[RMDB]
RNA sequence: GGGAACGACUCGAGUAGAGUCGAAAAAUGGUCCCAGCCUCCCUCGCUGGCGCCGGCUGGGCAACAUUCCGAGGGGACCGUCCCUCGGUAAUGGCGAAUGGGACCCAGAACUCUCUCUAGAUUCCCAGGUAGGUAAUAUCUUCGGAUAUUACCUACCAAAAGAAACAACAACAACAAC
Reactivity to 2A3 in 0.01 (KOAc 150mM, MgCl2 10mM, bicine 150mM(pH8.5), 24C), signal-to-noise 2, nucleotides 027 to 126: a010u090g030g010u000c010c000c000a020g010c010c010u020c010c000c000u040c100g030c020u050g120g000c060g090c060c040g040g000c040u050g020g010g000c000a040a020c000a020u050u030c000c000g020a000g040g010g000g080a170c050c090g300u300c030c010c000u010c000g000g010u000a010a020u030g010g000c040g060a100a080u070g000g000g000a010c000c030c020a040g070a130a020c010u020c000u000c000u000c010u040a040g000a110u020u010c000c010c000a000
Reactivity to DMS in 0.01 (KOAc 150mM, MgCl2 10mM, bicine 150mM(pH8.5), 24C), signal-to-noise 2, nucleotides 027 to 126: a080u040g010g010u000c070c000c000a110g000c030c050u010c060c020c030u070c230g040c100u010g010g000c070g010c020c030g000g030c020u000g020g000g040c030a050a090c020a070u000u010c020c020g000a000g010g000g000g010a150c300c250g000u010c020c000c000u000c010g000g000u010a000a020u000g000g020c120g020a070a080u000g000g000g000a050c000c000c140a090g000a120a070c030u000c010u010c020u000c010u010a070g000a300u000u000c000c010c010a140